[RMDB]
RNA sequence: GGGAACGACUCGAGUAGAGUCGAAAAACGCGCGAUGACCCCAGGCGCAUGCAGGAUGGCCCACGCAAUGAUGGCCGUCCAGAGUGGAUGUUGGGUGAAGAGCCGUCGGAGCGUAUGUCCAAGGCAGCUCCAAGAUACGAUUCGUCGUAUCUUGGAGAAAAGAAACAACAACAACAAC
Reactivity to 2A3 in 0.01 (KOAc 150mM, MgCl2 10mM, bicine 150mM(pH8.5), 24C), signal-to-noise 3, nucleotides 027 to 126: a000c040g040c010g000c030g110a090u060g080a070c000c000c010c000a010g110g020c030g000c020a020u100g050c050a010g000g020a020u020g010g030c050c050c010a090c060g120c050a060a210u200g080a070u100g010g000c000c000g000u000c010c000a000g020a000g040u070g000g060a120u070g040u120u030g070g000g000u080g100a150a040g030a040g090c060c030g000u040c010g000g020a090g000c020g030u070a120u140g080u000c000c010a020a020g080g070c030a020g010
Reactivity to DMS in 0.01 (KOAc 150mM, MgCl2 10mM, bicine 150mM(pH8.5), 24C), signal-to-noise 5, nucleotides 027 to 126: a030c080g000c050g020c020g000a060u010g000a200c120c010c010c060a080g010g020c060g000c010a040u000g000c130a210g000g010a020u000g010g010c020c010c140a160c150g010c240a140a140u020g010a100u010g000g000c020c000g040u000c000c000a030g010a140g010u010g010g010a050u010g000u010u000g000g010g010u010g010a130a070g010a110g000c030c010g020u000c040g010g020a280g010c020g030u000a050u010g010u000c020c040a090a160g000g010c150a130g010

The record gives the reactivity of an RNA of 177 nucleotides to 2A3 and DMS. The data come from the RNA Mapping Database (RMDB), library OK2TRN. The DMS profile rests on 3,933 reads. 2A3 adducts were read by reverse transcription with SuperScript II with manganese. Conditions: 150 mM KOAc, 10 mM MgCl2 and 150 mM bicine (pH 8.5), 24 C. Reactivities are given for positions 27 through 126.